An RNA of 177 nucleotides, treated with DMS and read out base by base.
[RMDB]
RNA sequence: GGGAACGACUCGAGUAGAGUCGAAAAAGGGAUCACCUGGGUUGAUUGUAAUGUCUGCAGUAUAUGGAAUGGAAUACUUGGUAGAUCUAGGAUUGAAAAGAAUGCCGUUAACUGAAAGUUCAAUCUGCUCUAUACCCUCGUUCGCGAGGGUAUAGAGAAAAGAAACAACAACAACAAC
Reactivity to DMS in 0.01 (KOAc 150mM, MgCl2 10mM, bicine 150mM(pH8.5), 24C), signal-to-noise 2, nucleotides 027 to 126: a040g000g030g000a090u010c080a080c020c040u010g010g010g010u010u000g000a040u010u000g030u000a120a050u000g030u010c040u000g020c070a030g010u000a040u000a060u000g020g010a090a050u010g000g010a090a070u000a040c040u010u030g010g010u000a100g020a060u000c050u000a080g010g000a070u000u000g010a070a060a020a080g010a100a070u000g000c020c030g000u000u010a040a190c100u000g020a140a110a110g000u000u000c040a000a040u010c020u000g000
Notes
The RNA was probed in 150 mM KOAc, 10 mM MgCl2 and 150 mM bicine (pH 8.5) at 24 C. DMS (dimethyl sulfate) methylates the pairing face of unpaired adenines and cytosines. Source: RMDB library OK2TST, as collected in RNAgym.